An RNA of 207 nucleotides, treated with 2A3 and read out base by base.
RNA sequence: GGGAACGACUCGAGUAGAGUCGAAAAAUCAGAGGGCGCUAUCAUGCAAACUAGUAUUGUCUGCUCAUGCACAGAACCAACUACCGAUAACUAACAGUGCAUGAAGGUUAGUUAUUCCAUAUUAAUUAAAACUCGUAAUUCUUCGGAAUUACGAGAACCUCAACAAAGGCUUCGGCCUUUGUUGAGGAAAAGAAACAACAACAACAAC
Reactivity to 2A3 in 0.01 (KOAc 150mM, MgCl2 10mM, bicine 150mM(pH8.5), 24C), signal-to-noise 1, nucleotides 027 to 156: a000u070c050a020g030a060g060g010g020c060g000c060u070a030u070c060a050u130g000c040a030a110a080c020u040a060g030u060a130u120u020g060u000c040u080g020c000u000c010a000u020g030c000a020c000a000g050a090a090c100c080a080a060c060u070a080c020c070g030a020u010a030a000c010u010a020a000c020a040g030u010g020c000a000u040g020a020a010g030g000u010u000a000g000u000u000a010u090u060c000c000a050u020a080u190u260a280a060u150u070a070a190a120a160c010u030c000g000u000a000a000u000u000c000u000u000c100g070g010a000a000u000u000a000c000g000a000g000a000a000
The data come from the RNA Mapping Database (RMDB), library M2RFOK.